[RMDB]
An RNA of 177 nucleotides, treated with DMS and 2A3 and read out base by base.
Conditions: 150 mM KOAc, 10 mM MgCl2 and 150 mM bicine (pH 8.5), 24 C.
It was measured as part of the RMDB libraries RFM100 and RFMREP.
RNA sequence: GGGAACGACUCGAGUAGAGUCGAAAAAGCUCAUAUACGUAUGAGCAACAACAAUAUCCUGGUGCUGAGUGAUGACACACGCAACUCCAGCAUCAGUGAUUUUGUUGACUGGAGGUACGCCUCCAGAGUUCCUACCUAACUUCGGUUAGGUAGGAACAAAAGAAACAACAACAACAAC
Reactivity to DMS in 0.01 (KOAc 150mM, MgCl2 10mM, bicine 150mM(pH8.5), 24C), signal-to-noise 4, nucleotides 027 to 126: a060g010c000u010c000a000u000a020u020a090c180g030u010a010u000g010a010g000c010a100a120c010a020a000c000a010a000u000a020u000c000c000u000g000g000u000g010c000u000g010a080g010u010g010a100u010g010a150c180a110c200a100c210g010c070a130a040c020u000c050c080a000g000c000a000u000c000a010g030u040g020a010u000u000u000u000g010u000u000g000a200c000u000g000g000a010g000g030u000a080c250g000c010c000u000c000c000a000g000a210
Reactivity to 2A3 in 0.01 (KOAc 150mM, MgCl2 10mM, bicine 150mM(pH8.5), 24C), signal-to-noise 9, nucleotides 027 to 126: a000g000c000u010c010a000u010a000u010a030c280g100u020a010u000g000a000g000c010a000a030c000a000a000c000a000a000u020a000u010c000c000u010g000g000u000g000c010u010g020a060g080u050g060a150u110g090a060c030a040c030a040c200g060c060a050a070c010u040c060c060a000g000c000a000u000c000a000g000u030g010a000u010u020u000u010g000u000u010g060a060c010u000g000g000a000g010g010u050a040c220g070c010c000u000c000c000a000g000a010